[RMDB]
RNA sequence: GGGAACGACUCGAGUAGAGUCGAAAAACGAAUCCUGUCAGGUCCGGAAGGAAGCAGCAGUAAGUGGUUAUUCUUGUGUGCCGCAGGGAAGCCUAGGCCGAGCCAUGAACUUAUGUAGCGCAUAGGGACUUGAGAAGCUGUUCGCAGCUUCUCAAGUAAAAGAAACAACAACAACAAC
Reactivity to DMS in 0.01 (KOAc 150mM, MgCl2 10mM, bicine 150mM(pH8.5), 24C), signal-to-noise 3, nucleotides 027 to 126: a090c090g020a110a110u020c080c010u000g030u010c130a220g000g000u010c010c010g000g030a110a100g050g000a090a080g000c010a140g030c040a010g000u040a040a120g020u010g000g010u030u020a070u000u000c020u020u070g030u030g000u020g000c040c000g020c110a030g000g020g050a090a110g000c040c030u000a080g000g030c020c030g000a100g000c030c020a080u030g050a030a060c010u010u010a050u020g020u000a070g010c050g000c020a040u010a030g020g000g000
Reactivity to 2A3 in 0.01 (KOAc 150mM, MgCl2 10mM, bicine 150mM(pH8.5), 24C), signal-to-noise 4, nucleotides 027 to 126: a000c070g000a020a080u050c020c010u020g080u100c030a040g020g040u000c000c000g060g130a070a040g050g040a030a020g010c010a000g000c010a000g040u110a100a020g040u080g040g060u080u070a110u080u040c010u070u070g080u000g070u090g100c030c010g020c040a030g040g030g020a030a030g030c010c020u100a120g050g000c030c050g040a030g010c000c000a080u070g020a030a010c010u040u050a040u120g050u060a030g010c030g000c030a010u010a010g050g030g000